This 307-nucleotide RNA was probed chemically with 2A3.
The RNA was probed in 150 mM KOAc, 10 mM MgCl2 and 150 mM bicine (pH 8.5) at 24 C.

[RMDB]
RNA sequence: GGGAACGACUCGAGUAGAGUCGAAAAGAUAUUCUACGGAAUAUCAGUAUACGUACGCGUAUACAGCAUACGUACGCGUAUGCAGGCGUGCUACGGCACGCCAGAUCUGCGCGUGAGCGCAGAUCACACGGUCUUCGGACCGUGACGUCUUCGUGAGAAGACGAGAGCAACUUAGGAUUUUAGGCUCCCCGGCGUGUCUCGAACCAUGCCGGGCCAAACCCAUAGGGCUGGCGGUCCCUGUGCGGUCAAAAUUCAUCCGCCGGAGUAGCUGUCUGUUCGCAGACAGCAAAAGAAACAACAACAACAAC
Reactivity to 2A3 in 0.01 (KOAc 150mM, MgCl2 10mM, bicine 150mM(pH8.5), 24C), signal-to-noise 2, nucleotides 027 to 266: g000a000u000a000u000u000c000u020a020c220g070g030a010a000u010a000u000c000a000g020u060a030u010a050c010g010u020a010c210g000c010g080u020a010u030a070c080a030g060c020a060u060a070c050g060u060a040c180g020c000g100u010a000u000g040c020a000g010g010c000g000u010g030c000u030a040c210g140g000c000a010c010g020c000c000a000g010a000u010c010u000g000c020g020c060g060u100g120a070g000c010g020c010a000g000a000u020c020a000c020a000c000g010g010u030c010u030u110c230g110g020a010c000c000g010u000g020a040c000g000u000c000u000u000c000g020u040g060a150g000a050a000g000a000c000g020a050g000a000g000c030a000a170c040u090u180a060g060g100a120u110u120u050u110a100g080g000c010u060c040c020c030c020g010g000c010g030u020g010u000c070u060c300g050a040a030c020c020a000u020g030c010c010g000g000g000c010c020a000a000a000c010c020c000a010u010a000g040g020g000c030u040g010g030c030g040g000u080c020c010c000u000g010u020g040c170g000g000u040c010a060a000a100a080u170u190c090a090u030c030c070g010c000c010g030g070a080g020u150a010